Structure probing data (2A3 and DMS) for a 177-nucleotide construct.
[RMDB]
RNA sequence: GGGAACGACUCGAGUAGAGUCGAAAACUGAGCUCGCCCACAGUGCCCUCCCGGGGUGAUGCUGUGCUGAGCACCGGGGCUGGGAGCGGCCCUCACCACCCGACAGCGAGAGCUUCGCCUCUGUGGAGACAAUACCAUUGUUCGCAAUGGUAUUGUCAAAAGAAACAACAACAACAAC
Reactivity to 2A3 in 0.01 (KOAc 150mM, MgCl2 10mM, bicine 150mM(pH8.5), 24C), signal-to-noise 3, nucleotides 027 to 126: c010u030g020a020g050c030u040c090g030c030c010c010a040c020a020g060u040g090c010c000c010u020c000c000c020g010g000g000g000u040g000a030u040g010c020u030g040u080g050c030u010g020a050g090c030a030c100c040g000g000g060g000c100u070g030g000g000a010g010c070g020g030c010c000c020u020c010a160c010c000a040c000c000c010g020a040c010a010g010c020g050a140g020a010g140c000u030u020c010g000c020c000u000c040u110g070u120g040g020a040
Reactivity to DMS in 0.01 (KOAc 150mM, MgCl2 10mM, bicine 150mM(pH8.5), 24C), signal-to-noise 5, nucleotides 027 to 126: c040u000g010a130g000c050u000c120g000c070c030c060a170c040a040g000u000g020c040c030c010u000c010c020c020g010g000g010g010u000g010a030u000g010c000u010g010u010g020c020u000g010a180g010c100a130c180c030g010g000g000g010c180u010g010g000g000a100g000c090g010g020c150c040c010u000c020a080c030c030a090c010c010c000g010a100c050a040g000c020g020a110g000a060g000c020u000u000c040g010c030c020u000c020u000g050u000g010g000a190
Source: RMDB library OK2TST, as collected in RNAgym. The reactions ran in a buffer of 150 mM KOAc, 10 mM MgCl2 and 150 mM bicine (pH 8.5), at 24 C.